RNA sequence: GGGAACGACUCGAGUAGAGUCGAAAACUGAUAUGCUUCGGCAUAUCAGAAAAUAAGGUGCAAAAAGAUGAGGAAACUGAAAACUGCAGCACUAGCAGAAAAAAACAGACGUCUUCGGACGUCUGAAGUAUACGGAUAGGUUCGCCUAUCCGUAUACAAAAGAAACAACAACAACAAC
Reactivity to 2A3 in 0.01 (KOAc 150mM, MgCl2 10mM, bicine 150mM(pH8.5), 24C), signal-to-noise 2, nucleotides 027 to 126: c000u000g000a000u020a000u000g000c000u020u060c200g100g000c000a000u020a000u000c000a010g020a010a020a000a000u150a040a060g030g000u030g000c030a040a030a030a140a110g100a160u200g020a040g070g090a120a050a040c070u140g040a070a100a110a140c010u010g000c020a050g010c010a010c040u030a030g010c030a020g140a050a100a010a020a020a000a010c000a000g000a000c010g020u010c030u030u130c260g090g000a010c000g000u010c000u020g000a000a010
Reactivity to DMS in 0.01 (KOAc 150mM, MgCl2 10mM, bicine 150mM(pH8.5), 24C), signal-to-noise 2, nucleotides 027 to 126: c000u010g000a000u000a010u000g000c000u020u000c270g010g000c000a000u000a000u010c000a010g000a060a040a030a120u020a080a070g010g000u000g000c010a040a050a050a100a050g000a120u010g000a080g020g010a090a070a080c080u000g000a040a070a070a140c030u000g030c050a050g010c050a020c070u010a060g020c050a040g020a010a000a060a030a110a040a210c010a020g000a000c000g010u000c000u000u010c220g020g010a010c000g010u000c000u000g000a000a070